[RMDB]
RNA sequence: GGGAACGACUCGAGUAGAGUCGAAAAAAUAUAGUGCAAAUCUGACAAAAUUUAGGUAAUCUAUGGAAUAAACCUUUCCUGUGCAAAGCUAGCUGGCCUUAUGGGAAUUGGUGGUACCUCAGUCUCAGGGGCAUCAUAAACUGACCAACCAUAUGAAGAAGUAUAGCAUCUUCGGAUGCUAUACUUCAAAAGAAACAACAACAACAAC
Reactivity to 2A3 in 0.01 (KOAc 150mM, MgCl2 10mM, bicine 150mM(pH8.5), 24C), signal-to-noise 2, nucleotides 027 to 156: a010a000u290a030u060a030g060u050g040c020a060a120a040u060c040u010g070a070c070a080a260a070a060u110u140u100a050g010g000u050a080a050u050c080u080a040u180g030g060a070a020u070a080a140a080c010c000u010u060u000c000c030u060g010u050g070c040a080a050a090g010c040u040a000g000c030u080g030g000c040c000u060u060a040u050g050g000g020a080a050u060u020g070g030u000g020g000u050a080c000c000u010c010a020g060u000c020u000c060a000g000g000g000g010c000a010u060c000a010u090a070a140a060c040u060g030a020c040c000a020a030c030c010a030u100a030u200g010a020a080
Reactivity to DMS in 0.01 (KOAc 150mM, MgCl2 10mM, bicine 150mM(pH8.5), 24C), signal-to-noise 2, nucleotides 027 to 156: a110a070u020a080u000a060g070u000g030c070a080a070a040u020c050u000g030a220c050a080a090a090a120u000u010u010a020g050g040u000a090a070u010c030u010a070u000g000g030a080a090u000a060a080a060c000c060u000u000u000c020c000u010g040u020g010c100a060a040a150g030c060u000a050g010c020u000g020g000c040c010u000u020a080u000g010g050g060a100a120u030u000g010g100u000g030g000u000a010c020c000u010c030a100g010u000c070u000c090a170g010g000g020g000c010a040u000c050a060u000a030a120a110c040u010g000a030c010c020a040a020c030c050a090u020a120u000g000a140a120